An RNA of 207 nucleotides, treated with 2A3 and DMS and read out base by base.

RNA sequence: GGGAACGACUCGAGUAGAGUCGAAAACACAGGAUCGUGUGGAAGUCCUGCUCGGGGCGGAAGGAUUAAAACCAUUCGAGCUAGUCAAUGCGUGGCGUGUCUCUCCGCAGCGUGUUGGCGAAUGUAACAAGCUGCCUCUCGUUCGCGAGAGGCAGAAGGGAAUUCUUAUGUUCGCAUAAGAAUUCCCAAAAGAAACAACAACAACAAC
Reactivity to 2A3 in 0.01 (KOAc 150mM, MgCl2 10mM, bicine 150mM(pH8.5), 24C), signal-to-noise 2, nucleotides 027 to 156: c020a000c010a010g250g010a260u150c100g060u060g010u010g050g000a100a050g020u000c000c020u020g020c000u010c000g000g000g000g000c030g030g050a040a050g040g050a040u150u100a060a030a030a090c040c020a020u110u130c040g020a030g020c010u020a000g030u000c000a000a030u000g000c000g010u020g060g000c000g040u070g090u040c080u030c040u000c140c000g000c020a010g000c010g000u000g000u000u000g010g010c000g010a010a000u060g040u090a130a100c100a110a070g040c010u010g000c000c000u000c000u000c000g040u040u070c220g040c010g100a000g000a000g000g010c000a000g000a000a000
Reactivity to DMS in 0.01 (KOAc 150mM, MgCl2 10mM, bicine 150mM(pH8.5), 24C), signal-to-noise 1, nucleotides 027 to 156: c030a100c070a120g030g040a090u010c140g000u000g020u030g010g010a130a190g000u000c030c000u000g000c010u010c090g050g000g060g010c040g010g010a220a080g020g030a110u000u000a090a160a100a100c030c010a150u010u000c030g020a110g020c120u020a170g010u000c020a010a090u000g000c020g000u000g010g060c010g050u000g010u000c130u000c050u000c300c010g010c000a060g030c010g060u000g070u000u000g010g030c020g010a080a030u000g030u040a080a170c070a120a090g000c000u000g030c010c010u010c000u000c010g060u010u020c300g080c050g000a030g010a010g020g050c000a000g040a030a060
The RNA was probed in 150 mM KOAc, 10 mM MgCl2 and 150 mM bicine (pH 8.5) at 24 C.